[RMDB]
RNA sequence: GGGAACGACUCGAGUAGAGUCGAAAACGGUCAAUUUCGAUUGACCGAAAAAGCGUACUACGGAUGUAGGAGCAUCUGGAAUGUCCCAAAUAGGACAUUCUGGAUGAACUACUCCGCAGAUAUCCGUAUCGCAAAAAUCCAAACUUCGGUUUGGAAACCAUAACACGAUAUUCGUAUCGUGUUAUGGAAAAGAAACAACAACAACAAC
Reactivity to 2A3 in 0.01 (KOAc 150mM, MgCl2 10mM, bicine 150mM(pH8.5), 24C), signal-to-noise 4, nucleotides 027 to 156: c010g000g000u000c000a000a010u030u130u120c080g160a030u000u020g000a000c000c000g050a020a000a000a000a000g030c030g030u090a060c050u010a000c020g010g000a010u030g010u070a080g020g010a020g020c000a000u000c000u010g010g000a010a000u000g020u020c020c010c020a180a300a150u300a090g000g020a000c000a000u010u000c000u010g010g000a000u010g000a000a000c010u070a070c000u000c010c000g000c020a020g030a100u060a010u090c000c000g000u010a020u190c020g040c000a080a090a000a010a020u010c000c000a010a000a000c000u050u060c180g100g000u000u010u000g000g000a080a000a010
Reactivity to DMS in 0.01 (KOAc 150mM, MgCl2 10mM, bicine 150mM(pH8.5), 24C), signal-to-noise 2, nucleotides 027 to 156: c030g040g000u000c000a030a020u000u010u020c200g010a040u010u000g010a000c010c000g040a000a020a040a110a060g000c020g030u000a080c100u010a010c000g010g000a020u010g010u000a100g030g000a140g010c020a020u000c000u010g030g000a020a010u000g010u000c010c000c030a040a180a220u010a090g050g010a040c000a000u000u000c000u000g010g000a020u000g000a050a200c020u000a150c000u000c000c010g020c060a080g000a080u000a180u000c010c000g010u000a070u000c040g000c040a020a070a040a130a180u010c000c000a000a010a000c000u000u000c300g030g040u000u000u000g000g020a020a020a070

The data come from the RNA Mapping Database (RMDB), library RNAMAK. Chemical mapping of a 207-nucleotide RNA with 2A3 and DMS. For 2A3, 5,880 sequencing reads were counted. Values cover nucleotides 27 to 156. In probing experiments dimethyl sulfate is read out at A N1 and C N3, which are open when not base-paired. The RNA was probed in 150 mM KOAc, 10 mM MgCl2 and 150 mM bicine (pH 8.5) at 24 C.